[RMDB]
RNA sequence: GGGAACGACUCGAGUAGAGUCGAAAACGCGGACCAGCACAUCGGGGGCCUUGAGCGGCUGGAUGCGGCCGACGAAGGCCACGACCUGCUCGUCGGCCCGCAGGCCCAGCUCAGCGCGGGCGGCGAAGGAUUUAUUUAAUUUCGAUUAAAUAAAUCCAAAAGAAACAACAACAACAAC
Reactivity to 2A3 in 0.01 (KOAc 150mM, MgCl2 10mM, bicine 150mM(pH8.5), 24C), signal-to-noise 2, nucleotides 027 to 126: c050g000c020g040g000a060c020c000a010g040c020a030c000a120u110c040g000g000g060g050g000c010c020u110u120g060a040g030c030g010g000c020u010g020g020a040u100g040c020g000g010c000c000g010a030c010g030a050a010g030g000c020c020a030c010g090a160c010c010u050g060c020u030c010g010u010c000g050g060c070c010c000g000c000a010g040g000c000c010c010a010g000c010u060c040a040g030c010g010c010g040g000g040c030g030g000c020g040a070a040
Reactivity to DMS in 0.01 (KOAc 150mM, MgCl2 10mM, bicine 150mM(pH8.5), 24C), signal-to-noise 6, nucleotides 027 to 126: c100g000c040g020g010a100c030c030a090g010c050a080c130a080u000c070g000g010g010g010g010c040c020u000u000g010a090g030c040g010g010c020u000g000g000a180u010g010c020g010g000c000c000g010a020c020g010a050a030g000g020c010c080a080c190g000a090c030c050u000g010c180u000c030g000u000c010g010g010c060c030c010g010c010a030g010g000c130c000c030a070g020c020u010c090a070g020c060g010c040g000g010g010c030g010g020c050g010a100a120
Chemical mapping of a 177-nucleotide RNA with 2A3 and DMS. Values cover nucleotides 27 to 126. It was measured as part of the RMDB library OK2TST. DMS (dimethyl sulfate) methylates the pairing face of unpaired adenines and cytosines. For 2A3 the reverse transcriptase was SuperScript II with manganese.